[RMDB]
An RNA of 177 nucleotides, treated with DMS and 2A3 and read out base by base. The 2A3 profile rests on 14,527 reads. It was measured as part of the RMDB library OK2TST. The reactions ran in a buffer of 150 mM KOAc, 10 mM MgCl2 and 150 mM bicine (pH 8.5), at 24 C.

RNA sequence: GGGAACGACUCGAGUAGAGUCGAAAACGCGAUCGCACGGGCCGCCGGAUGCGAGAUCUUCGCCACCGCGGGCAGUGCCCAGCGGCGACAACUGCUGCACGACAUGGGUGUCGAGCAUGUCUACGACCAUUAUCCGGUAGUUCGCUACCGGAUAAUGAAAAGAAACAACAACAACAAC
Reactivity to DMS in 0.01 (KOAc 150mM, MgCl2 10mM, bicine 150mM(pH8.5), 24C), signal-to-noise 7, nucleotides 027 to 126: c050g000c050g000a090u000c130g000c020a030c030g000g010g000c020c020g010c060c060g020g000a110u000g010c010g010a030g000a170u020c140u010u000c020g000c030c120a120c020c020g010c030g010g000g010c010a080g010u000g010c010c060c050a100g020c020g000g000c040g010a060c120a050a080c080u000g010c040u010g010c080a100c050g010a080c070a070u010g010g010g030u000g010u010c040g010a070g010c020a040u010g000u000c030u000a110c110g010a120c120
Reactivity to 2A3 in 0.01 (KOAc 150mM, MgCl2 10mM, bicine 150mM(pH8.5), 24C), signal-to-noise 7, nucleotides 027 to 126: c020g030c020g030a090u100c040g000c020a020c030g010g090g060c030c020g050c050c120g020g010a020u040g010c060g010a020g040a120u150c150u180u020c140g000c020c020a030c000c010g060c040g020g050g000c040a060g030u030g030c020c000c000a030g010c020g000g010c010g040a030c050a110a030c040u100g020c010u040g020c040a020c070g060a010c020a090u160g200g090g090u150g080u070c030g010a010g020c020a020u090g020u020c040u060a070c050g060a040c020